[RMDB]
RNA sequence: GGGAACGACUCGAGUAGAGUCGAAAAGUCAUGGAUGAGGUGUUCGUGCCAGCGGAAAAUGAACUGCCUUCUGCCGAGGGGCUGGGUGGGCCAUUCAGUUGUCUCAAUUCUGCUCGGCUUGGAAUUGCAACCAUAGAUCUUUCGAGAUCUAUGGUUGAAAAGAAACAACAACAACAAC
Reactivity to 2A3 in 0.01 (KOAc 150mM, MgCl2 10mM, bicine 150mM(pH8.5), 24C), signal-to-noise 3, nucleotides 027 to 126: g050u020c020a040u110g040g020a060u060g050a060g030g060u070g000u090u120c060g040u070g050c020c010a040g030c040g080g030a070a050a010a070u120g000a060a020c030u070g050c000c010u040u080c040u080g010c020c010g030a050g030g070g030g000c050u050g030g030g040u050g020g020g030c030c000a010u050u070c010a020g120u030u050g080u070c020u000c040a020a070u090u020c000u030g010c000u010c040g010g000c020u020u050g050g000a080a050u110u120g020
Reactivity to DMS in 0.01 (KOAc 150mM, MgCl2 10mM, bicine 150mM(pH8.5), 24C), signal-to-noise 6, nucleotides 027 to 126: g000u010c050a070u000g000g010a080u000g010a080g000g020u000g010u000u010c080g030u000g000c050c040a070g020c080g020g000a040a050a070a110u010g010a070a070c070u000g020c020c020u000u000c070u000g010c040c030g000a110g010g000g010g010c050u000g000g000g020u000g010g000g000c090c040a040u000u000c140a070g010u000u010g010u000c060u010c030a040a120u010u000c030u000g010c030u000c060g020g010c050u000u010g000g000a050a100u000u010g010